The record gives the reactivity of an RNA of 177 nucleotides to 2A3. For 2A3, 500 sequencing reads were counted. 2A3 adducts were read by reverse transcription with SuperScript II with manganese. Conditions: 150 mM KOAc, 10 mM MgCl2 and 150 mM bicine (pH 8.5), 24 C. The data come from the RNA Mapping Database (RMDB), library OK1LIB.
RNA sequence: GGGAACGACUCGAGUAGAGUCGAAAAAUCAACUGGAAAUGGAUACGGCGUUCGCUGUACCUCACCGCGGCGGUGGUGAUCCUGUUGCCGAUGGUCACCUUCACGAUGGCCUACCUGAUCGUCGACGCUGUGUCCCUCCGUUCGCGGAGGGACACAGAAAAGAAACAACAACAACAAC
Reactivity to 2A3 in 0.01 (KOAc 150mM, MgCl2 10mM, bicine 150mM(pH8.5), 24C), signal-to-noise 2, nucleotides 027 to 126: a030u120c020a020a040c150u120g030g030a090a100a090u300g060g020a120u070a030c000g030g000c090g110u140u300c210g000c000u000g010u070a070c000c140u000c000a010c000c060g000c000g010g060c060g010g060u000g000g000u030g030a110u120c030c010u170g000u120u100g020c010c000g040a000u040g000g000u050c000a010c000c030u080u120c020a000c010g100a090u050g000g060c000c000u000a000c000c040u030g050a070u070c000g080u010c040g030a000c010g000